[RMDB]
RNA sequence: GGGAACGACUCGAGUAGAGUCGAAAAUAAAAAAUACUUAGAGUCAGAGAGUAAUGUUAGAUUACAAUCAGCAAUACAUCCUGAAUGGUGUGUAAAAAAACCAAUAGAUCCAGAAUUAAUCAAAAUGGAUGUAUCUAUCAUUCGUGAUAGAUACAUCAAAAGAAACAACAACAACAAC
Reactivity to DMS in 0.01 (KOAc 150mM, MgCl2 10mM, bicine 150mM(pH8.5), 24C), signal-to-noise 2, nucleotides 027 to 126: u040a010a010a080a130a060a050u010a030c030u010u000a090g020a110g000u000c020a080g010a140g020a240g000u000a020a030u010g000u000u010a070g040a050u010u020a040c260a100a110u000c020a050g010c060a010a040u000a040c030a070u000c010c010u000g020a080a060u000g000g000u010g010u000g020u000a000a000a100a090a070a080a030c030c030a030a050u000a080g000a060u000c030c040a100g010a070a140u010u000a050a070u000c080a020a020a060a110u010g010
Reactivity to 2A3 in 0.01 (KOAc 150mM, MgCl2 10mM, bicine 150mM(pH8.5), 24C), signal-to-noise 2, nucleotides 027 to 126: u030a000a080a010a000a000a000u150a020c030u060u070a030g000a000g170u020c010a020g090a010g030a040g100u020a010a030u040g000u030u050a070g010a060u010u090a020c020a040a040u010c010a000g030c010a030a000u000a050c010a130u020c010c000u050g030a060a060u060g040g010u020g000u020g010u040a030a050a050a040a000a000a040c020c020a020a020u040a040g080a030u040c000c020a000g050a240a170u110u130a080a080u140c070a010a080a070a040u130g090

Chemical mapping of a 177-nucleotide RNA with DMS and 2A3. For 2A3 the reverse transcriptase was SuperScript II with manganese. For DMS, 1,846 sequencing reads were counted.